[RMDB]
RNA sequence: GGGAACGACUCGAGUAGAGUCGAAAAGAUAUGGACGUGUGAUGGAGCUACUCGGAAACGAGUUAGCUAUGAAGUCAACGUCCUAAGUCAAAACACAACACUGAUCCUUCGGGAUCAGUGUUGUGAACUAAGUAGUCUAGUUCGCUAGACUACUUAGAAAAGAAACAACAACAACAAC
Reactivity to DMS in 0.01 (KOAc 150mM, MgCl2 10mM, bicine 150mM(pH8.5), 24C), signal-to-noise 8, nucleotides 027 to 126: g000a040u000a300u010g000g010a000c000g020u000g010u010g010a020u000g010g010a020g020c000u000a030c000u000c010g010g000a100a090a230c000g000a020g000u010u010a000g020c000u000a130u000g000a100a200g000u000c010a050a020c000g010u000c000c000u000a020a060g000u000c040a090a080a120a200c010a000c000a000a000c000a010c000u000g000a010u000c000c000u000u010c210g040g010g010a000u000c000a000g010u000g000u000u000g000u000g000a030a140
Reactivity to 2A3 in 0.01 (KOAc 150mM, MgCl2 10mM, bicine 150mM(pH8.5), 24C), signal-to-noise 8, nucleotides 027 to 126: g020a020u060a040u130g000g010a000c010g040u300g120u070g200a010u030g010g040a000g000c000u000a000c000u010c000g020g030a060a070a040c010g000a000g030u120u170a010g000c010u070a300u080g020a010a000g000u010c000a000a000c000g000u000c000c000u010a070a010g040u010c030a010a000a170a070c000a000c000a000a000c010a010c000u000g000a000u000c010c020u030u110c300g050g000g000a000u010c010a000g000u000g000u000u000g000u000g000a000a000
Background
Conditions: 150 mM KOAc, 10 mM MgCl2 and 150 mM bicine (pH 8.5), 24 C. Structure probing data (DMS and 2A3) for a 177-nucleotide construct. The data come from the RNA Mapping Database (RMDB), library TTRDEL. Values are in units of 0.01, from 0 to 300, in steps of 10. For 2A3, 37,426 sequencing reads were counted. 2A3 adducts were read by reverse transcription with SuperScript II with manganese.